Structure probing data (DMS and 2A3) for a 177-nucleotide construct. The 2A3 profile rests on 2,505 reads. 2A3 adducts were read by reverse transcription with SuperScript II with manganese. For DMS the reverse transcriptase was MarathonRT. The reactions ran in a buffer of 150 mM KOAc, 10 mM MgCl2 and 150 mM bicine (pH 8.5), at 24 C.
RNA sequence: GGGAACGACUCGAGUAGAGUCGAAAAGAUAAGGAGUGCGAAAGCAAUCACUCUGUACACUGAGAUUGCAAGCACUCUGUAUCAACGGUAGAGCAGUGGAAACACAGUGUACAGUAACCGACUGUGAGCAUAGUAGUACCUUCGGGUACUACUAUGCAAAAGAAACAACAACAACAAC
Reactivity to DMS in 0.01 (KOAc 150mM, MgCl2 10mM, bicine 150mM(pH8.5), 24C), signal-to-noise 3, nucleotides 027 to 126: g000a000u000a040a130g000g010a020g010u000g000c010g010a130a150a170g000c000a000a000u000c010a110c100u030c040u010g000u000a060c140a030c070u010g000a040g000a000u000u000g020c000a040a300g000c020a000c000u000c000u000g000u010a030u000c000a080a060c150g000g010u000a020g010a080g020c010a050g030u000g010g000a080a050a100c090a120c030a020g010u030g000u020a040c010a020g020u010a060a120c050c050g010a220c040u000g010u000g000a220
Reactivity to 2A3 in 0.01 (KOAc 150mM, MgCl2 10mM, bicine 150mM(pH8.5), 24C), signal-to-noise 2, nucleotides 027 to 126: g020a000u050a000a030g010g000a000g000u000g000c010g060a120a000a020g000c010a000a000u010c020a110c050u130c000u000g020u010a030c040a020c000u010g000a000g000a000u010u000g000c000a020a020g010c000a010c000u000c000u000g000u000a000u030c010a000a000c040g020g070u060a020g000a010g060c020a000g030u020g000g030a030a010a030c040a000c010a040g000u010g000u000a030c010a000g010u020a020a060c020c040g030a000c010u050g000u000g050a020